[RMDB]
RNA sequence: GGGAACGACUCGAGUAGAGUCGAAAACUCACCUGUCGUCGUCGACGAAGGCAUGUGAGCUUCAACUCGAUGAAGAGCGUCAGCGGACGGCCUCUGAGACGAGCGAUGGACAGUAGAGCUCGUCUCUCCAAUGUUGCAUCUUCGGAUGCAACAUUGGAAAAGAAACAACAACAACAAC
Reactivity to 2A3 in 0.01 (KOAc 150mM, MgCl2 10mM, bicine 150mM(pH8.5), 24C), signal-to-noise 2, nucleotides 027 to 126: c010u000c010a000c000c020u050g000u040c000g000u000c000g040u040c130g060a300c030g020a130a030g020g000c010a010u040g030u040g050a010g020c000u050u040c030a040a030c000u030c020g110a090u080g120a090a100g030a010g020c030g010u020c040a010g120c070g120g060a030c010g030g050c020c000u010c080u050g020a010g000a010c000g000a010g010c010g020a060u130g110g020a060c050a040g140u160a030g030a020g020c010u000c000g010u000c010u000c000u000
Reactivity to DMS in 0.01 (KOAc 150mM, MgCl2 10mM, bicine 150mM(pH8.5), 24C), signal-to-noise 1, nucleotides 027 to 126: c010u000c020a040c010c030u010g000u000c000g010u000c010g100u030c230g020a210c090g000a040a040g000g000c010a000u000g000u020g010a100g020c120u010u000c050a100a090c040u000c000g010a170u000g010a120a060g000a040g020c050g000u000c070a040g080c050g000g000a020c000g010g020c070c010u020c160u000g000a020g020a010c040g000a020g000c010g000a280u000g020g030a090c120a060g000u010a000g010a300g010c020u000c000g020u000c000u000c000u000